An RNA of 207 nucleotides, treated with 2A3 and read out base by base.
[RMDB]
RNA sequence: GGGAACGACUCGAGUAGAGUCGAAAAUGGACUUUUUACAGUUCCUACUUAUCCGGUUUUAACGCUGUUUUAUUGGCGCAAAGGUUGACGGAUAAACAACUAAUAAUUAAACCUUUUGUGUGCGAAAAUUGGACGUUUAGGUUCGCCUAAACGUCAACCGUACCACAAACUUCGGUUUGUGGUACGGAAAAGAAACAACAACAACAAC
Reactivity to 2A3 in 0.01 (KOAc 150mM, MgCl2 10mM, bicine 150mM(pH8.5), 24C), signal-to-noise 1, nucleotides 027 to 156: u120g020g030a040c000u000u110u080u090u280a150c080a010g000u000u060c000c000u010a080c000u030u040a050u030c030c000g070g000u000u130u010u080a060a030c030g000c000u030g210u130u140u000u140a220u120u090g030g000c010g000c050a020a000a010g000g000u030u050g010a010c000g000g000a030u000a000a060a000c020a030a020c030u190a120a130u150a160a020u220u120a140a050a000c040c000u040u060u140u110g140u000g030u090g010c140g080a060a090a120a160u090u100g100g010a030c020g000u000u000u000a000g000g010u030u000c120g000c020c000u000a000a000a010c000g000u000c000a000a000
The reactions ran in a buffer of 150 mM KOAc, 10 mM MgCl2 and 150 mM bicine (pH 8.5), at 24 C. The 2A3 profile rests on 492 reads.